About this RNA: An RNA of 177 nucleotides, treated with DMS and read out base by base. DMS adducts were read by reverse transcription with MarathonRT. The reactions ran in a buffer of 150 mM KOAc, 10 mM MgCl2 and 150 mM bicine (pH 8.5), at 24 C. Source: RMDB library RFM100, as collected in RNAgym.
RNA sequence: GGGAACGACUCGAGUAGAGUCGAAAAGGGACGGGUCGACAAACAAAAACAACAAGCCCGAAAUCAUAAUAAAAACAAAGCACGCACCUACUUGGGGGGGAGCUUCGGCUCCCCCAGUAGCUUCACCUUAAUACCGGACUUUCGAGUCCGGUAUUAAAAAAGAAACAACAACAACAAC
Reactivity to DMS in 0.01 (KOAc 150mM, MgCl2 10mM, bicine 150mM(pH8.5), 24C), signal-to-noise 1, nucleotides 027 to 126: g000g000g000a120c040g000g000g000u000c020g060a140c220a060a150a010c070a030a270a150a180a120c120a150a000c120a170a080g020c010c000c000g010a050a090a110u060c060a100u020a060a000u030a090a090a040a140a080c080a000a120a050g000c000a000c050g000c060a050c160c010u000a030c040u000u000g020g000g060g130g090g010g000a040g000c090u000u030c080g000g050c020u000c020c070c000c000c000a020g010u000a010g000c040u000u000c060a100c110c050